[RMDB]
RNA sequence: GGGAACGACUCGAGUAGAGUCGAAAACAACUAUGGAAGGCACCCUGAGCAUGAUCAAACUGAUGGACCCAGGGAAUGCAACGAUCUCUUCCCUCAAUGACUUGCGGAAGUCAGCAGUUAGCACGCCGAGUCUUCGCUAUUUCGAUAGCGAAGACUCAAAAGAAACAACAACAACAAC
Reactivity to 2A3 in 0.01 (KOAc 150mM, MgCl2 10mM, bicine 150mM(pH8.5), 24C), signal-to-noise 1, nucleotides 027 to 126: c010a060a000c020u220a090u170g050g050a030a030g040g010c000a060c010c000c010u030g010a020g000c040a030u110g090a080u140c040a040a240a300c190u200g020a050u040g060g090a070c010c000c000a000g000g020g000a140a090u060g000c000a020a050c000g060a080u010c040u000c000u080u020c030c020c010u040c000a050a230u140g060a090c000u000u040g070c040g060g000a020a000g020u020c010a000g010c000a030g020u030u100a020g020c020a020c040g080c040c020
Reactivity to DMS in 0.01 (KOAc 150mM, MgCl2 10mM, bicine 150mM(pH8.5), 24C), signal-to-noise 1, nucleotides 027 to 126: c060a120a150c190u000a150u000g000g000a100a140g000g000c040a140c010c020c020u000g000a010g030c140a050u030g010a110u010c050a080a090a140c130u040g000a040u000g030g010a100c050c050c120a000g000g000g000a060a060u010g010c010a040a080c020g030a070u010c000u000c070u000u000c000c000c040u000c260a090a140u000g000a010c050u040u000g130c120g020g000a060a060g000u000c010a070g010c050a050g000u000u000a040g050c030a050c070g020c130c020
Chemical mapping of a 177-nucleotide RNA with 2A3 and DMS. For 2A3 the reverse transcriptase was SuperScript II with manganese. The 2A3 profile rests on 1,078 reads. The reactions ran in a buffer of 150 mM KOAc, 10 mM MgCl2 and 150 mM bicine (pH 8.5), at 24 C.